[RMDB]
RNA sequence: GGGAACGACUCGAGUAGAGUCGAAAAAGCAUGGUUACGACCAUGCAAGCCUCUUUACGGUGCUGCCUUGUGGAAUCUGGAUCAAGCAGCAUUGUACAGGGCUAUGAACGUGGCUUACGAGCCACGAUGACUAGACGAGCUUCGGCUCGUCUAGUCAAAAAGAAACAACAACAACAAC
Reactivity to 2A3 in 0.01 (KOAc 150mM, MgCl2 10mM, bicine 150mM(pH8.5), 24C), signal-to-noise 3, nucleotides 027 to 126: a000g010c020a020u020g000g000u090u080a100c210g020a020c070c000a000u000g000c010a000a000g000c000c020u290c040u030u000u000a010c000g000g030u000g010c000u000g020c040c060u030u000g020u070g070g180a260a220u150c120u140g130g070a110u100c000a000a000g000c000a000g000c000a000u000u020g000u000a000c040a000g000g010g000c020u050a080u140g060a060a060c000g020u010g000g000c000u030u030a070c300g060a010g000c000c000a000c000g000a010
Reactivity to DMS in 0.01 (KOAc 150mM, MgCl2 10mM, bicine 150mM(pH8.5), 24C), signal-to-noise 1, nucleotides 027 to 126: a130g000c000a010u000g000g000u000u000a090c240g000a060c000c000a000u020g000c000a080a000g000c020c000u020c020u020u020u000a030c010g000g010u010g020c000u000g000c120c070u000u000g020u040g050g020a160a190u120c300u020g020g020a190u000c020a070a000g010c020a030g000c080a000u010u030g000u000a000c060a010g000g000g020c000u030a070u060g000a110a120c000g060u000g020g000c010u000u000a110c150g040a080g000c000c000a000c020g000a050